[RMDB]
RNA sequence: GGGAACGACUCGAGUAGAGUCGAAAAGAAAGAAGUUGUGUCAUUGUCUACGGUGUAUGGUACUAGAUCCUCAUAAGUGUAUAUAUCUAGAGUAAUGUUUAAUUUAUUAAAUGGUUGAUAAUAUGGAUCGUCGUGGCAAUUUCCUAAGACGAAAAUAGUAUACUCUCUAAUUCGUUAGAGAGUAUACAAAAGAAACAACAACAACAAC
Reactivity to 2A3 in 0.01 (KOAc 150mM, MgCl2 10mM, bicine 150mM(pH8.5), 24C), signal-to-noise 1, nucleotides 027 to 156: g120a020a090a000g060a030a030g020u020u030g030u000g050u050c040a080u020u090g010u000c070u080a030c100g000g020u030g050u030a080u070g050g030u020a030c000u040a030g010a050u050c010c000u000c060a100u040a180a080g060u040g030u040a020u020a030u020a000u260c040u060a010g020a050g080u030a120a090u070g010u030u210u090a070a120u120u040u140a160u050u170a060a040a130u080g000g020u030u010g020a010u000a180a040u030a090u180g030g000a000u010c040g010u020c030g000u010g000g020c060a070a040u000u080u030c000c020u050a100a000g000a000c000g020a130a000a000a000u060a090
Reactivity to DMS in 0.01 (KOAc 150mM, MgCl2 10mM, bicine 150mM(pH8.5), 24C), signal-to-noise 2, nucleotides 027 to 156: g000a130a120a140g000a070a170g010u010u000g020u010g010u010c050a090u000u010g010u010c010u000a080c090g000g000u000g010u010a050u020g030g030u000a090c070u000a140g010a100u000c050c020u000c040a120u000a070a100g010u020g020u000a070u000a140u000a050u000c000u000a150g000a180g000u010a090a060u000g000u000u000u000a010a090u010u010u000a100u050u000a030a030a080u010g010g010u000u000g000a070u010a030a150u000a080u000g010g000a190u000c020g030u000c040g000u000g030g010c070a030a090u000u020u010c040c020u010a080a160g010a130c030g010a070a050a050a070u000a150